[RMDB]
RNA sequence: GGGAACGACUCGAGUAGAGUCGAAAAGAAUUGCCUUCGGGCAAUUCGGGUUUUCCUAAGUCCCUGGAGUUGCGGUAGAGACAUGUCGGAAACGACAACAGCUCUACUACAACGAUGAAAGGGAUAUGGAUUAUGCUCUCAUGUUCGCAUGAGAGAACAUUAACACUUGCUUCGGCAAGUGUUAAUGAAAAGAAACAACAACAACAAC
Reactivity to DMS in 0.01 (KOAc 150mM, MgCl2 10mM, bicine 150mM(pH8.5), 24C), signal-to-noise 3, nucleotides 027 to 156: g010a010a010u010u010g030c000c000u000u020c300g050g050g040c000a000a000u000u000c000g020g080g010u000u010u010u000c010c000u000a150a300g000u010c000c010c010u000g010g030a240g010u020u000g020c000g030g010u000a010g010a050g000a060c050a300u000g000u000c020g000g010a170a150a250c010g020a040c010a030a080c080a180g000c010u000c000u000a000c010u010a020c000a010a050c010g010a170u000g020a110a180a070g000g010g000a000u010a050u000g000g000a090u000u000a100u000g000c000u000c000u010c010a000u000g010u000u020c270g030c030a020u000g000a020g000a030g010a060a070
Reactivity to 2A3 in 0.01 (KOAc 150mM, MgCl2 10mM, bicine 150mM(pH8.5), 24C), signal-to-noise 3, nucleotides 027 to 156: g000a000a000u030u020g020c030c000u040u090c300g060g020g000c000a000a000u010u000c010g000g010g000u110u100u040u050c010c000u030a140a070g020u010c000c000c000u000g010g010a030g000u000u000g010c050g020g000u000a000g000a000g000a070c080a220u060g000u000c000g000g050a140a060a100c010g010a000c000a050a000c030a040g000c000u000c000u000a000c000u010a010c010a000a000c020g080a250u030g010a010a010a000g000g000g000a000u010a050u040g020g000a040u110u120a100u300g040c000u000c000u000c000a000u010g080u070u110c300g010c080a000u010g000a010g000a000g010a010a020